Description
The data come from the RNA Mapping Database (RMDB), library OK3TST. An RNA of 207 nucleotides, treated with 2A3 and DMS and read out base by base. DMS adducts were read by reverse transcription with MarathonRT. Reactivities are rounded to 0.1 and cut off at 0 and 3.
RNA sequence: GGGAACGACUCGAGUAGAGUCGAAAAAAGUCCAUAUGCCCACCUUCGCUGGCUCGGGUGGAUGCUUAUACAUGCUAUGGAUGCCUACAUUUGAAAUAAUGUAGAUGCCUAAUACUCUCUCUCAGGGAGAGAGUUUAGAUGCCUCCAAAGGGUAUGCCAGUAAUAAUAUCUUCGGAUAUUAUUACUGAAAAGAAACAACAACAACAAC
Reactivity to 2A3 in 0.01 (KOAc 150mM, MgCl2 10mM, bicine 150mM(pH8.5), 24C), signal-to-noise 4, nucleotides 027 to 156: a000a000g060u020c010c000a010u040a030u150g020c010c000c010a020c010c010u070u100c070g050c130u080g080g000c030u020c030g000g000g010u010g000g010a060u080g020c040u170u080a070u060a170c080a050u180g040c020u040a030u060g010g000a010u030g010c010c000u010a000c000a010u010u020u080g120a130a110a030u150a020a040u060g000u000a010g010a070u100g010c000c000u050a070a020u120a090c000u010c000u010c000u010c010u030c100a140g040g260g000a000g000a000g000a000g000u000u000u000a010g000a000u050g050c030c030u040c040c040a130a130a030g070g000g000u060a040u080g010c010
Reactivity to DMS in 0.01 (KOAc 150mM, MgCl2 10mM, bicine 150mM(pH8.5), 24C), signal-to-noise 2, nucleotides 027 to 156: a060a070g040u000c010c020a100u000a090u010g020c060c000c000a040c010c010u000u010c060g030c040u010g030g000c020u000c060g010g010g010u010g000g010a100u000g010c090u000u000a160u010a100c090a140u000g030c040u000a130u010g010g010a020u010g010c100c000u000a010c000a000u000u000u010g010a170a090a140u010a030a000u000g000u000a010g000a160u000g020c020c010u010a030a090u000a060c010u000c000u000c000u000c010u000c100a270g010g030g010a030g010a020g010a010g020u000u000u000a040g010a100u000g000c000c010u000c020c040a100a110a120g000g010g030u000a020u000g000c090